RNA sequence: GGGAACGACUCGAGUAGAGUCGAAAAGAAGAGAGCGUAGCACACACUCAGACUGUACGACAGUCUGACACACACCUACGCUAGUGCAUGGUGUGUGUGAUAUCGAUGUUGCACGAAGAUGAGGAAACUUUAACGCUUAUUUCGAUAAGCGUUAAAGAAAAGAAACAACAACAACAAC
Reactivity to 2A3 in 0.01 (KOAc 150mM, MgCl2 10mM, bicine 150mM(pH8.5), 24C), signal-to-noise 8, nucleotides 027 to 126: g120a060a020g070a000g010a010g030c020g020u060a030g020c020a020c000a000c000a010c050u030c010a000g000a010c000u030g030u130a110c140g120a040c210a000g010u010c000u000g010a000c000a000c000a000c000a000c000c020u110a060c120g020c020u100a090g130u110g170c030a030u050g010g000u000g000u010g000u000g000u020g050a030u040a030u150c050g020a070u040g020u090u060g010c010a000c030g020a050a020g050a080u150g040a040g080g000a080a060a010
Reactivity to DMS in 0.01 (KOAc 150mM, MgCl2 10mM, bicine 150mM(pH8.5), 24C), signal-to-noise 9, nucleotides 027 to 126: g010a110a080g000a090g000a090g010c030g010u000a120g020c020a040c130a070c060a090c130u000c010a010g010a030c010u000g010u010a130c250g010a120c020a010g010u000c000u000g000a030c030a000c010a010c000a000c000c000u000a060c140g010c070u000a090g020u010g020c010a070u000g000g010u010g000u000g010u000g000u000g010a100u000a070u000c100g010a090u000g010u000u010g000c020a070c030g000a050a060g000a090u000g000a090g010g000a110a080a140